[RMDB]
RNA sequence: GGGAACGACUCGAGUAGAGUCGAAAACAACGAGCAGGUUAUGGAGCGCUAUCAGCUUAAUAAUCAGAGUAAUGUGCUGGUGGAAGGUCGUGCUAUCGGGCAUCGUAUCGGUGCCGGGCCAGUUAAGAAUAUUUCAGCUCUUCGGAGCUGAAAUAUUAAAAGAAACAACAACAACAAC
Reactivity to DMS in 0.01 (KOAc 150mM, MgCl2 10mM, bicine 150mM(pH8.5), 24C), signal-to-noise 2, nucleotides 027 to 126: c140a060a140c100g010a120g030c070a050g000g010u010u000a070u000g000g020a060g020c050g030c160u000a090u010c160a090g000c000u010u000a120a030u000a060a030u010c040a090g000a120g000u000a100a050u000g000u010g010c010u010g000g020u010g000g010a120a090g020g030u000c150g030u010g000c030u000a070u010c090g050g000g010c010a030u000c050g000u010a100u000c050g010g010u000g010c010c020g000g010g000c030c020a080g010u000u010a090a120g010

This 177-nucleotide RNA was probed chemically with DMS.
Source: RMDB library OK2TRN, as collected in RNAgym.